[RMDB]
RNA sequence: GGGAACGACUCGAGUAGAGUCGAAAAUGCGCGCGUGACGGAACGCACAUCGCAGGGUGGGCUGUGCCGGCCGCCUGGCCAACUGCUCGCGCGGGUGUGCGCCGGCGCCCUGGAUGAGCGGUGGCAGCAUCGCGAUGACUUUCGAGUCAUCGCGAUGAAAAGAAACAACAACAACAAC
Reactivity to 2A3 in 0.01 (KOAc 150mM, MgCl2 10mM, bicine 150mM(pH8.5), 24C), signal-to-noise 3, nucleotides 027 to 126: u170g020c060g010c020g010c020g020u060g080a120c050g020g050a110a030c020g040c010a010c000a010u000c050g010c270a090g000g030g020u060g010g110g000c030u040g050u110g070c050c030g000g000c010c000g040c030c050u090g040g000c020c020a100a070c100u150g000c040u090c020g080c020g020c000g030g010g020u060g040u080g000c100g000c000c000g000g000c000g000c000c010c000u030g030g010a030u070g010a050g020c020g000g030u040g030g010c030a020g040
Reactivity to DMS in 0.01 (KOAc 150mM, MgCl2 10mM, bicine 150mM(pH8.5), 24C), signal-to-noise 2, nucleotides 027 to 126: u020g000c040g000c040g000c070g020u030g000a150c070g010g020a130a090c060g000c010a080c030a000u010c000g000c040a060g010g000g050u000g020g000g010c040u010g040u000g000c020c060g000g000c010c000g000c090c090u000g010g020c050c100a070a100c160u030g000c020u000c060g010c100g010c020g010g020g030u000g030u020g030c040g000c010c000g000g020c010g020c000c040c000u000g000g000a030u020g000a070g000c020g000g020u020g000g000c010a150g010